[RMDB]
RNA sequence: GGGAACGACUCGAGUAGAGUCGAAAAUGCCACGUUACUAUUAAUAGGUAUUGAUGUACUGCCAAGUGGGCCAUUUACCGUCAUUGACGUCAAUAGGGGGCGUGGGAAUGGGCAAUGGGCCACCCCAGCUAAGGUGGGCGUUCGCGCCCACCUUAGCAAAAGAAACAACAACAACAAC
Reactivity to 2A3 in 0.01 (KOAc 150mM, MgCl2 10mM, bicine 150mM(pH8.5), 24C), signal-to-noise 1, nucleotides 027 to 126: u110g050c040c000a080c010g000u070u180a150c060u000a040u210u110a120a120u100a260g150g000u080a080u060u040g180a130u000g130u090a130c050u040g000c020c020a130a180g020u000g040g000g030c000c000a020u040u050u140a100c000c000g090u100c100a080u000u200g170a000c000g000u000c030a020a020u000a070g000g000g070g000g000c000g000u000g000g020g050a180a000u020g000g000g000c040a000a090u050g000g020g000c070c000a010c000c000c000c030a020

This 177-nucleotide RNA was probed chemically with 2A3. For 2A3, 452 sequencing reads were counted. Reactivities are rounded to 0.1 and cut off at 0 and 3. For 2A3 the reverse transcriptase was SuperScript II with manganese. Values cover nucleotides 27 to 126. The reactions ran in a buffer of 150 mM KOAc, 10 mM MgCl2 and 150 mM bicine (pH 8.5), at 24 C.